[RMDB]
RNA sequence: GGGAACGACUCGAGUAGAGUCGAAAAGACGGCGUAAAGCUCUAUCGAAAAUAAACCUUACAAGCAUAUUUUUGGGGACUGUCCCUGACAAUGGUGAGCAAGCUCAGCUCGUACUGAGAAGCCUAAAACCCUUCCCAUUUUUCGAAAUGGGAAGGGUAAAAGAAACAACAACAACAAC
Reactivity to DMS in 0.01 (KOAc 150mM, MgCl2 10mM, bicine 150mM(pH8.5), 24C), signal-to-noise 2, nucleotides 027 to 126: g010a210c120g000g010c040g000u040a070a130a140g000c000u000c020u040a070u020c020g010a090a060a060a040u000a070a110a140c180c030u010u050a060c280a060a120g000c110a210u000a010u010u000u000u010u000g000g000g010g000a270c120u020g000u010c010c000c000u000g010a090c150a030a050u020g010g020u000g010a020g020c010a060a100g020c030u000c000a000g010c010u020c120g000u000a040c010u000g000a040g000a030a120g030c020c040u000a020a050a020
Reactivity to 2A3 in 0.01 (KOAc 150mM, MgCl2 10mM, bicine 150mM(pH8.5), 24C), signal-to-noise 1, nucleotides 027 to 126: g050a010c060g020g030c000g040u120a090a050a050g000c000u000c030u030a080u070c030g110a030a020a050a010u170a070a110a070c030c010u100u140a080c090a090a050g060c080a090u080a080u120u030u040u080u040g020g010g020g010a040c060u050g130u080c010c000c000u020g020a020c020a030a120u050g070g000u030g020a060g020c020a080a020g030c010u010c030a000g000c020u150c140g020u090a090c010u000g020a000g010a060a020g000c000c000u050a060a060a020
Structure probing data (DMS and 2A3) for a 177-nucleotide construct. For 2A3, 2,564 sequencing reads were counted. The reactions ran in a buffer of 150 mM KOAc, 10 mM MgCl2 and 150 mM bicine (pH 8.5), at 24 C. DMS adducts were read by reverse transcription with MarathonRT.